[RMDB]
The record gives the reactivity of an RNA of 177 nucleotides to 2A3 and DMS. The RNA was probed in 150 mM KOAc, 10 mM MgCl2 and 150 mM bicine (pH 8.5) at 24 C. 2A3 adducts were read by reverse transcription with SuperScript II with manganese. For 2A3, 5,915 sequencing reads were counted.

RNA sequence: GGGAACGACUCGAGUAGAGUCGAAAAUAAUGCCACUUCGGUGGCAUUAGCAGGUACGAAAGCCCUAUCAAGUACAAAAUCGCAAACAACAAGAUAGGCAAAUAAUGCAUAGCUUCGGCUAUGCAAAGCACAGUGAUAUUUUCGAAUAUCACUGUGCAAAAGAAACAACAACAACAAC
Reactivity to 2A3 in 0.01 (KOAc 150mM, MgCl2 10mM, bicine 150mM(pH8.5), 24C), signal-to-noise 4, nucleotides 027 to 126: u020a000a000u000g000c000c000a010c010u030u050c190g120g000u000g070g020c000a000u000u000a000g000c020a030g080g150u170a050c050g090a130a020a030g040c010c000c000u000a020u020c010a040a050g010u050a080c040a080a080a030a120u200c130g040c190a100a080a100c070a070a030c010a120a000g000a010u010a010g010g010c010a010a030a020u210a060a030u030g000c000a000u000a000g000c000u050u030c240g070g000c000u000a000u000g000c000a000a020a000
Reactivity to DMS in 0.01 (KOAc 150mM, MgCl2 10mM, bicine 150mM(pH8.5), 24C), signal-to-noise 4, nucleotides 027 to 126: u010a000a010u000g020c000c000a000c000u000u010c160g040g020u010g010g000c000a010u000u000a010g010c150a090g020g000u000a090c100g000a040a030a060g030c240c010c000u000a010u000c010a040a300g010u000a030c100a060a030a110a050u010c180g020c170a060a090a080c120a070a050c030a080a250g000a000u000a000g000g020c000a140a060a070u010a080a100u000g010c010a000u000a020g000c000u000u010c150g010g000c000u000a000u000g000c010a000a000a070